[RMDB]
The record gives the reactivity of an RNA of 207 nucleotides to 2A3 and DMS.
Values cover nucleotides 27 to 156.
The RNA was probed in 150 mM KOAc, 10 mM MgCl2 and 150 mM bicine (pH 8.5) at 24 C.
The 2A3 profile rests on 734 reads.
For DMS, 4,790 sequencing reads were counted.
The data come from the RNA Mapping Database (RMDB), library M2RFPK.
RNA sequence: GGGAACGACUCGAGUAGAGUCGAAAAGUGGUGCGCGGAGAGGGUAACCACCGGCGCGCGUCACUGAUAUAUCCACCGGGGGGUAAGGGGAGAAAAGGAUACAGCGCGAUGAAGUUAGCACGCUGCCGAAAUGUACCCACAUUCGUGUGGGUACAAAUUACAAAAGAAUAUUCGUAUUCUUUUGUAAAAAAGAAACAACAACAACAAC
Reactivity to 2A3 in 0.01 (KOAc 150mM, MgCl2 10mM, bicine 150mM(pH8.5), 24C), signal-to-noise 1, nucleotides 027 to 156: g010u000g000g010u020g010c020g000c040g040g090a150g030a070g090g040g040u170a150a110c130c040a060c050c010g040g050c000g000c000g000c000g000u000c000a000c000u000g030a000u010a020u030a060u110c090c090a050c070c080g000g030g030g030g000g020u020a050a040g020g090g000g000a070g010a010a100a060a050g000g010a000u070a120c010a000g010c020g010c030g070a020u030g010a130a020g040u060u120a000g010c040a040c020g020c000u050g020c000c010g050a080a060a040u090g010u000a000c000c030c000a000c000a010u060u060c210g060u030g000u000g020g020g000u000a000c000a000a000a000
Reactivity to DMS in 0.01 (KOAc 150mM, MgCl2 10mM, bicine 150mM(pH8.5), 24C), signal-to-noise 2, nucleotides 027 to 156: g030u010g020g020u000g020c010g050c010g010g000a140g020a140g010g010g020u000a120a140c150c120a070c000c020g020g050c000g030c020g010c020g020u000c010a030c020u010g010a100u000a170u000a100u000c050c030a120c090c040g000g000g010g020g030g010u020a060a050g010g020g030g000a110g000a040a040a130a150g020g020a180u000a080c020a030g020c030g010c000g000a120u000g010a120a130g000u000u010a100g030c020a060c100g000c020u000g030c040c050g000a020a090a110u000g010u000a030c000c000c000a030c010a110u010u000c240g030u000g050u000g000g000g010u000a000c000a000a010a100